RNA sequence: GGGAACGACUCGAGUAGAGUCGAAAAGAUUAAGUGGGAGCGUCGCCCUAUCGGUGCAUCGGAUAUUAAUUAGCCAGUGCGUGGCAAUACGCAUAUUGAUGUCUACUUUGGCGUAGACUCUGCCAAUUUAAGGAUUGUUGGGCAAUCCAGCCCUAGAGAUACGCAUAAAUUUCGAUUUAUGCGUAUCAAAAGAAACAACAACAACAAC
Reactivity to 2A3 in 0.01 (KOAc 150mM, MgCl2 10mM, bicine 150mM(pH8.5), 24C), signal-to-noise 4, nucleotides 027 to 156: g040a050u110u130a060a040g060u080g010g030g000a030g010c010g020u030c020g070c000c000c030u060a090u130c070g010g000u050g020c000a010u040c000g020g000a000u010a040u120u170a240a090u140u090a040g030c020c030a010g020u010g030c020g010u010g040g000c100a040a070u160a030c000g020c010a000u010a070u040u130g020a020u050g040u020c030u010a070c040u110u140u120g070g000c070g010u010a080g020a040c010u000c020u020g060c010c020a080a130u070u090u070a070a030g080g020a060u010u050g060u040u080g030g010g000c000a010a060u060c050c020a010g010c030c000c000u010a020g030a000
Reactivity to DMS in 0.01 (KOAc 150mM, MgCl2 10mM, bicine 150mM(pH8.5), 24C), signal-to-noise 3, nucleotides 027 to 156: g020a120u000u000a040a100g030u000g000g000g000a060g020c050g000u010c030g000c020c010c010u000a070u000c070g030g020u000g000c050a080u010c050g000g010a060u000a060u000u010a060a120u000u010a110g000c000c020a160g030u010g020c030g050u010g000g010c130a070a080u010a040c050g000c030a050u000a090u010u000g000a030u000g020u000c030u000a030c020u000u010u000g010g000c090g020u000a090g000a050c000u000c030u020g020c000c020a020a080u010u000u000a110a130g020g000a130u000u000g000u010u000g020g020g030c060a070a140u000c080c070a120g020c010c020c000u000a060g010a280